Structure probing data (DMS and 2A3) for a 177-nucleotide construct. It was measured as part of the RMDB libraries RFM100 and RFMREP. Conditions: 150 mM KOAc, 10 mM MgCl2 and 150 mM bicine (pH 8.5), 24 C. The 2A3 profile rests on 1,835 reads. 2A3 adducts were read by reverse transcription with SuperScript II with manganese. For DMS the reverse transcriptase was MarathonRT.
RNA sequence: GGGAACGACUCGAGUAGAGUCGAAAAUGAGGGAAAGAUGAAAAGAACUUUGAAAAGAGAGUUAAAGAGUACCUGAAACUGCUGAAAGGGAACCGAAUCGUUUCCAGUGUCUAUAAUCCGUGGUAUACUACACGAGUAACUUCGGUUACUCGUGUAGAAAAGAAACAACAACAACAAC
Reactivity to DMS in 0.01 (KOAc 150mM, MgCl2 10mM, bicine 150mM(pH8.5), 24C), signal-to-noise 4, nucleotides 027 to 126: u010g010a090g000g000g000a030a100a070g020a080u010g000a070a100a140a060g020a050a080c050u010u020u010g020a060a090a080a110g010a070g000a070g010u010u010a060a080a090g000a120g010u010a040c010c010u020g000a070a070a070c070u010g000c020u020g000a090a070a100g000g000g000a080a040c100c040g000a030a040u000c030g000u020u010u000c000c000a110g000u030g010u000c060u010a040u010a070a050u010c050c040g010u000g000g010u000a040u010a110
Reactivity to 2A3 in 0.01 (KOAc 150mM, MgCl2 10mM, bicine 150mM(pH8.5), 24C), signal-to-noise 3, nucleotides 027 to 126: u080g010a040g000g060g010a010a090a050g130a060u200g050a050a050a000a000g110a050a010c000u030u130u120g050a030a060a030a000g120a010g000a010g000u120u170a080a070a000g060a020g000u020a090c000c000u010g030a090a070a000c030u050g050c010u030g080a120a030a030g030g010g040a010a000c040c000g030a020a090u060c020g020u000u010u030c000c000a010g040u000g040u050c040u050a130u060a120a030u050c030c010g000u030g010g000u040a010u040a070